[RMDB]
RNA sequence: GGGAACGACUCGAGUAGAGUCGAAAAGAUAUGGAAACAUGUGUGGUGCCAGCUCCCGUCGGAAACGACGGAGAGCGGUAAUACCACCAUGUUUCCUAAGUCAAACGAUACCGUUCGCGGUAUCGAACCUGAGGAAGUAGUUCGCUACUUCCUCAGGAAAAGAAACAACAACAACAAC
Reactivity to 2A3 in 0.01 (KOAc 150mM, MgCl2 10mM, bicine 150mM(pH8.5), 24C), signal-to-noise 3, nucleotides 027 to 126: g020a020u070a000u130g000g000a000a000a000c000a000u020g300u030g010u020g130g000u060g260c180c120a050g010c030u000c020c000c000g010u000c000g000g000a080a040a060c000g040a010c020g000g020a280g000a000g140c000g020g000u030a050a060u130a040c010c000a000c000c000a010u000g000u000u000u000c000c000u000a010a000g010u010c010a000a050a140c020g000a010u000a000c020c010g020u070u080c300g000c010g080g000u000a000u000c000g010a020a060
Reactivity to DMS in 0.01 (KOAc 150mM, MgCl2 10mM, bicine 150mM(pH8.5), 24C), signal-to-noise 3, nucleotides 027 to 126: g000a010u000a290u020g000g000a000a000a000c000a000u010g010u020g040u000g000g020u000g030c100c080a140g040c000u000c000c010c010g010u010c010g010g000a060a050a120c000g010a040c020g000g000a050g020a010g030c000g010g030u010a120a130u010a130c000c010a010c000c000a000u000g000u000u010u000c000c000u000a010a070g010u000c030a090a150a250c020g010a000u020a000c010c000g010u010u010c260g020c000g000g010u000a000u000c010g000a080a120